About this RNA: Source: RMDB library OK2TST, as collected in RNAgym. The record gives the reactivity of an RNA of 177 nucleotides to DMS. The RNA was probed in 150 mM KOAc, 10 mM MgCl2 and 150 mM bicine (pH 8.5) at 24 C.
RNA sequence: GGGAACGACUCGAGUAGAGUCGAAAAUAUCAACGACAGGGGCAGGUGCAGUUAGCGCUCAAUGAUUAUGCACAGGCGCUUCGUUUAGAUUCUGGUAAUGUGACGGCACAGCGUGGCUGGGCAGAACCGAAGGGACCCAAUUCGUUGGGUCCCUUCGAAAAGAAACAACAACAACAAC
Reactivity to DMS in 0.01 (KOAc 150mM, MgCl2 10mM, bicine 150mM(pH8.5), 24C), signal-to-noise 1, nucleotides 027 to 126: u020a100u020c040a050a050c160g000a040c170a010g030g010g000g020c010a030g020g030u000g000c020a030g010u000u010a060g000c160g050c110u020c070a160a090u010g000a080u000u000a100u000g010c030a050c040a080g040g020c030g000c040u000u000c040g000u000u030u020a130g000a070u000u000c080u010g010g010u000a060a110u000g010u000g000a090c110g000g000c080a040c110a060g000c100g000u000g020g000c060u010g010g000g000c020a000g000a080a070c110